[RMDB]
RNA sequence: GGGAACGACUCGAGUAGAGUCGAAAAGAUAUGGAUGGUGUGUAAGGCGAUGAAAUAUAUCGGAAACGAUAUAUGGAGCCUUACACCCAUCCUAAGUCAAAGUUGCACACCUUCGGGUGUGCAACAACCAAUUAGUGUUCUUCGGAACACUAAUUGGAAAAGAAACAACAACAACAAC
Reactivity to 2A3 in 0.01 (KOAc 150mM, MgCl2 10mM, bicine 150mM(pH8.5), 24C), signal-to-noise 3, nucleotides 027 to 126: g040a020u060a050u110g010g010a010u010g010g000u210g010u000g000u270a000a000g000g030c020g180a300u040g000a040a030a000u020a000u000a000u010c000g010g000a070a040a080c010g000a000u000a000u000a000u020g000g000a000g010c000c010u010u010a000c000a010c020c000c000a000u000c010c000u000a010a000g010u020c030a000a030a130g000u010u000g010c000a000c000a000c010c000u060u150c300g160g000g000u000g000u000g000c000a000a000c000a000a000
Reactivity to DMS in 0.01 (KOAc 150mM, MgCl2 10mM, bicine 150mM(pH8.5), 24C), signal-to-noise 1, nucleotides 027 to 126: g000a040u000a300u000g000g000a000u000g010g000u010g020u000g000u010a010a000g000g020c000g000a120u020g000a130a070a010u000a010u000a000u010c000g010g000a160a070a230c010g010a010u000a000u000a000u000g010g000a070g000c000c000u000u000a000c010a010c010c000c000a000u000c000c000u000a020a080g010u010c030a070a130a120g010u000u000g000c000a000c000a000c000c000u000u010c210g040g010g030u000g030u000g000c000a000a000c000a080a160